Chemical mapping of a 177-nucleotide RNA with DMS and 2A3.

RNA sequence: GGGAACGACUCGAGUAGAGUCGAAAAAGUUAGUGAUGAAAUCCCAUGCGUGUCAUCUGACUUCCACGUCUCGCUCUGCCUUCGCUCUGCGCUGUCUGCGUUCUGCAGCUUGGGUUUGGCUAGGGCACUCUGUAAUCGAGUUCGCUCGAUUACAGAGAAAAGAAACAACAACAACAAC
Reactivity to DMS in 0.01 (KOAc 150mM, MgCl2 10mM, bicine 150mM(pH8.5), 24C), signal-to-noise 1, nucleotides 027 to 126: a060g010u020u000a050g000u020g000a030u000g000a050a090a080u000c050c000c010a110u020g020c110g020u000g030u000c010a030u000c030u010g000a090c050u010u000c000c000a140c120g040u020c030u000c110g000c030u000c050u000g000c000c000u000u000c140g010c040u000c040u000g000c120g010c030u000g000u010c060u000g010c040g000u010u020c080u020g000c030a040g010c040u000u010g010g000g010u000u010u010g000g010c020u000a060g020g000g000c020a170
Reactivity to 2A3 in 0.01 (KOAc 150mM, MgCl2 10mM, bicine 150mM(pH8.5), 24C), signal-to-noise 1, nucleotides 027 to 126: a010g070u060u070a040g040u030g090a040u050g030a080a000a150u120c000c000c030a000u090g070c060g070u110g050u000c010a090u030c030u020g020a050c010u080u030c040c010a070c090g060u010c040u050c050g040c030u040c010u010g000c000c030u050u060c030g000c000u000c000u010g040c160g000c030u000g100u130c010u080g040c050g070u160u060c050u100g040c030a010g010c000u010u050g050g010g000u000u040u080g000g000c030u040a050g020g010g000c010a030
As a SHAPE reagent, 2A3 marks flexible, mostly unpaired nucleotides at the ribose 2'-OH.
For DMS, 1,515 sequencing reads were counted.
The 2A3 profile rests on 1,434 reads.